This 177-nucleotide RNA was probed chemically with DMS and 2A3. For DMS the reverse transcriptase was MarathonRT. The reactions ran in a buffer of 150 mM KOAc, 10 mM MgCl2 and 150 mM bicine (pH 8.5), at 24 C. It was measured as part of the RMDB library OK2TST. Reactivities are given for positions 27 through 126.
RNA sequence: GGGAACGACUCGAGUAGAGUCGAAAAAUAUGCACCAGGCGGGCCUACGGCAAUUGGGUGCCCACUGCAACAUCGAGCACGGCUGCGUGGUAGCCCGAGCGGAAACGUUGCGCGGUGCGGAGAUUCACGUAUAUCUGGGAUUCGUCCCAGAUAUACGAAAAGAAACAACAACAACAAC
Reactivity to DMS in 0.01 (KOAc 150mM, MgCl2 10mM, bicine 150mM(pH8.5), 24C), signal-to-noise 8, nucleotides 027 to 126: a090u000a100u010g010c010a030c020c010a210g000g010c030g010g010g010c010c010u010a280c080g010g020c100a110a130u000u010g010g010g020u010g000c180c010c010a030c040u020g030c020a020a020c030a070u000c060g010a260g020c080a140c140g010g020c020u000g010c020g030u000g010g010u010a140g010c020c020c010g010a090g010c030g010g010a070a070a090c260g000u000u000g010c010g010c060g010g010u000g010c010g000g000a100g000a130u010u000c070a150
Reactivity to 2A3 in 0.01 (KOAc 150mM, MgCl2 10mM, bicine 150mM(pH8.5), 24C), signal-to-noise 5, nucleotides 027 to 126: a010u130a020u160g010c010a010c010c020a010g070g010c030g010g000g020c010c010u060a050c070g160g010c070a100a240u170u110g050g000g020u080g020c000c000c000a030c060u170g000c000a030a020c010a090u150c080g090a050g140c090a030c110g050g010c030u020g000c020g080u070g050g000u030a020g020c000c020c000g000a030g010c020g020g030a040a060a010c020g000u010u020g000c030g010c040g010g000u020g010c020g010g010a060g010a040u110u120c080a010